[RMDB]
RNA sequence: GGGAACGACUCGAGUAGAGUCGAAAACAGAUAUCGACCCUGUGUGCCUACUCUGUGCAAGGCACUAUGGUGUCAGCAGAGAGAACAGGAGUCAUAUUCUCUGCCCCACGGACUCAUGGUCAAGUUGAAGAGGCUUGAAGUACGUGAGGGUCAUCAACCUGGAGUAUCCAUUCGUGGAUACUCCAGGAAAAGAAACAACAACAACAAC
Reactivity to DMS in 0.01 (KOAc 150mM, MgCl2 10mM, bicine 150mM(pH8.5), 24C), signal-to-noise 1, nucleotides 027 to 156: c080a090g010a110u000a050u000c060g040a040c000c010c000u010g010u020g070u000g000c040c030u000a100c000u010c060u010g060u000g050c090a090a090g010g030c000a020c010u010a040u140g000g030u020g010u000c040a300g000c030a010g020a000g000a160g000a070a090c070a010g010g010a080g010u000c030a100u000a070u020u010c040u000c010u000g010c010c020c000c000a030c030g000g010a040c010u000c110a090u010g000g000u000c000a040a100g010u010u000g040a170a220g000a240g000g050c000u010u010g000a190a090g000u000a000c020g000u010g000a090g000g030g050u000c070a070u010c060a030a220
Reactivity to 2A3 in 0.01 (KOAc 150mM, MgCl2 10mM, bicine 150mM(pH8.5), 24C), signal-to-noise 4, nucleotides 027 to 156: c010a010g030a030u040a020u100c130g000a000c000c000c000u010g000u020g020u080g140c020c020u150a270c000u090c010u010g060u030g070c140a230a230g000g020c010a010c030u070a190u220g170g000u010g000u000c010a000g010c000a000g010a000g000a000g000a030a010c010a010g000g040a120g050u000c010a000u020a050u160u050c010u030c020u050g020c010c000c000c000a010c000g000g010a000c000u010c060a100u190g070g000u020c020a070a080g040u150u160g180a180a100g040a050g150g020c000u010u010g030a070a000g010u020a010c020g020u010g010a300g010g000g010u050c020a080u080c020a020a090